[RMDB]
RNA sequence: GGGAACGACUCGAGUAGAGUCGAAAAUUUGCUGGGUGAGGGCAACACGAGGGGAUGAGGUACCAUACCAAACUGAGCUUCUGAUGUAAUGUUAGCAAGCUGGAUUGCAUUCCCAUUUUACACUCUUCCACUGGUCUAGAGAAGACGCUUUAGGAAAUAAUAAUGGCGGAUUCGUCCGCCAUUAUUAAAAAGAAACAACAACAACAAC
Reactivity to 2A3 in 0.01 (KOAc 150mM, MgCl2 10mM, bicine 150mM(pH8.5), 24C), signal-to-noise 1, nucleotides 027 to 156: u020u010u060g060c030u060g030g000g000u020g010a060g000g020g000c020a030a030c010a060c090g080a130g000g030g010g000a030u040g010a020g010g040u080a100c060c040a050u110a050c000c000a040a040a080c040u080g050a010g040c030u020u030c020u040g020a010u030g060u170a210a080u140g000u070u040a000g040c050a040a030g010c020u060g030g000a080u070u050g000c020a000u000u010c020c000c000a000u010u010u000u110a040c090a010c090u160c030u100u030c010c060a010c030u020g000g000u020c010u050a040g000a000g030a190a000g000a020c040g070c080u120u060u080a050g060g000a080a020a050
Reactivity to DMS in 0.01 (KOAc 150mM, MgCl2 10mM, bicine 150mM(pH8.5), 24C), signal-to-noise 1, nucleotides 027 to 156: u010u000u010g010c020u000g030g000g020u000g000a080g000g010g020c050a070a080c150a090c050g040a170g030g030g000g020a030u010g010a060g030g020u000a020c050c040a130u000a130c040c030a050a080a130c070u000g000a080g030c020u000u000c040u010g000a050u010g000u010a080a130u000g030u000u000a080g000c100a050a050g030c030u020g020g000a100u000u000g000c070a180u000u000c010c010c030a190u000u000u000u000a090c070a130c050u000c000u010u000c020c000a220c020u020g000g030u000c020u000a110g010a130g030a000a070g010a090c080g000c050u000u000u010a140g020g010a080a090a170